The data come from the RNA Mapping Database (RMDB), library 15KLIB. An RNA of 170 nucleotides, treated with DMS and 2A3 and read out base by base. The RNA was probed in 150 mM KOAc, 10 mM MgCl2 and 150 mM bicine (pH 8.5) at 24 C. 2A3 adducts were read by reverse transcription with SuperScript II with manganese. For DMS, 78,022 sequencing reads were counted. The 2A3 profile rests on 30,539 reads.
RNA sequence: GGGAACGACUCGAGUAGAGUCGAAAAGUUUUCAUCCUCAAGUUUCUUGAUCUUCUUGUUGGAUCGCCGGAGAUCCUUCUCGAGCAGUCGCCUUUUCUUCCUUUCUUCUACCCACUGUUCGAGGAUCGUGCAGUGGAGUUCGCUCCACUGAAAAGAAACAACAACAACAAC
Reactivity to DMS in 0.01 (KOAc 150mM, MgCl2 10mM, bicine 150mM(pH8.5), 24C), signal-to-noise 9, nucleotides 027 to 129: g000u040u020u020u000c080a100u040c040c000u010c140a120a090g000u000u000u000c010u020u020g030a000u030c030u020u000c080u020u040g030u030u020g000g000a080u000c000g010c120c060g000g020a080g010a040u020c040c020u000u010c020u020c030g010a000g040c040a020g020u000c090g010c030c030u020u010u020u020c090u000u000c030c030u030u010u000c050u030u020c080u010a130c030c000c030a110c010u020g010u030u010c030g000a090g020g010a030u010c050g000u000g020
Reactivity to 2A3 in 0.01 (KOAc 150mM, MgCl2 10mM, bicine 150mM(pH8.5), 24C), signal-to-noise 9, nucleotides 027 to 129: g030u050u040u090u160c040a080u040c010c030u090c060a060a060g020u000u030u000c030u070u050g030a070u010c020u090u020c040u100u150g050u040u050g060g010a030u030c030g030c100c090g080g010a090g010a050u020c010c000u030u020c010u000c020g010a010g000c010a000g020u060c050g090c030c000u070u100u050u070c050u060u070c010c000u080u100u100c040u070u030c020u070a100c000c010c010a030c020u010g010u020u010c010g010a020g000g000a040u100c050g040u060g040